[RMDB]
RNA sequence: GGGAACGACUCGAGUAGAGUCGAAAAAGACUCAGGUACGCCUGAGUCACUGUUCCUUUUUCCUAUGCAUAUACCUCUUUGACAUGCUGCUUUAAAGAGGCAUAGGGCAUGGGAAAAUGGGGCGGAAUAUUCUCAACUAUUUCGAUAGUUGAGAAUAAAAAGAAACAACAACAACAAC
Reactivity to DMS in 0.01 (KOAc 150mM, MgCl2 10mM, bicine 150mM(pH8.5), 24C), signal-to-noise 7, nucleotides 027 to 126: a080g010a010c000u000c000a000g000g010u000a090c240g020c010c000u000g000a020g010u000c000a020c010u000g010u000u000c000c000u000u000u000u000u000c000c000u000a010u000g010c000a100u000a010u000a040c000c000u000c000u000u000u000g000a030c110a170u020g020c180u020g020c120u010u010u010a000a000a010g010a010g000g010c020a010u000a010g000g010g010c010a000u000g000g000g000a000a000a010a010u000g000g000g000g010c010g000g010a170a120
Reactivity to 2A3 in 0.01 (KOAc 150mM, MgCl2 10mM, bicine 150mM(pH8.5), 24C), signal-to-noise 9, nucleotides 027 to 126: a000g000a000c000u000c000a000g010g000u040a030c250g090c020c000u000g000a000g000u000c000a000c000u010g000u020u020c000c000u010u000u000u000u000c000c000u010a000u000g000c010a010u010a000u010a050c010c000u010c010u010u010u010g030a020c020a100u210g120c090u090g020c050u090u050u110a000a000a000g000a000g000g000c000a000u010a000g080g060g000c000a000u000g000g000g000a000a000a000a000u030g000g000g010g000c010g010g020a080a020

Background
The record gives the reactivity of an RNA of 177 nucleotides to DMS and 2A3. Reactivities are given for positions 27 through 126.